RNA sequence: GGGAACGACUCGAGUAGAGUCGAAAAGAAAUGGGCGCUGAAAGAUGCGUAGCUACCCUUCUGGAGCCACUUCCUGGUGGUAAGCAGAAAUCCAAGGGUACGGUGGUACGGUGGAAAGCAGUCCCAAGCCCAAUGCGAUAUUCGUAUCGCAUUGGGCAAAAGAAACAACAACAACAAC
Reactivity to 2A3 in 0.01 (KOAc 150mM, MgCl2 10mM, bicine 150mM(pH8.5), 24C), signal-to-noise 2, nucleotides 027 to 126: g100a000a110a040u080g000g000g000c020g000c020u070g060a050a050a070g020a010u060g150c000g010u000a020g000c000u010a010c000c000c000u000u010c030u020g000g000a000g030c000c030a010c000u230u150c060c200u120g020g010u000g000g000u000a030a020g060c010a010g050a060a030a030u210c120c050a040a000g000g000g020u050a010c030g000g080u010g000g000u010a010c000g000g040u010g010g020a050a030a010g000c040a010g080u180c000c000c010a000a000
Reactivity to DMS in 0.01 (KOAc 150mM, MgCl2 10mM, bicine 150mM(pH8.5), 24C), signal-to-noise 2, nucleotides 027 to 126: g000a030a090a180u010g020g000g060c130g030c030u030g010a070a200a050g000a070u000g000c020g050u010a050g050c020u000a030c010c000c000u000u000c030u000g010g000a130g010c000c000a040c000u000u070c270c110u050g000g000u040g000g000u000a010a020g000c040a000g000a010a060a070u030c190c250a200a040g000g020g020u000a020c000g010g030u000g000g070u000a010c050g010g000u000g050g000a220a280a040g000c000a070g000u080c000c030c000a020a060
Overview
This 177-nucleotide RNA was probed chemically with 2A3 and DMS. Source: RMDB library RFM100, as collected in RNAgym. Reactivities are given for positions 27 through 126. The 2A3 profile rests on 1,240 reads.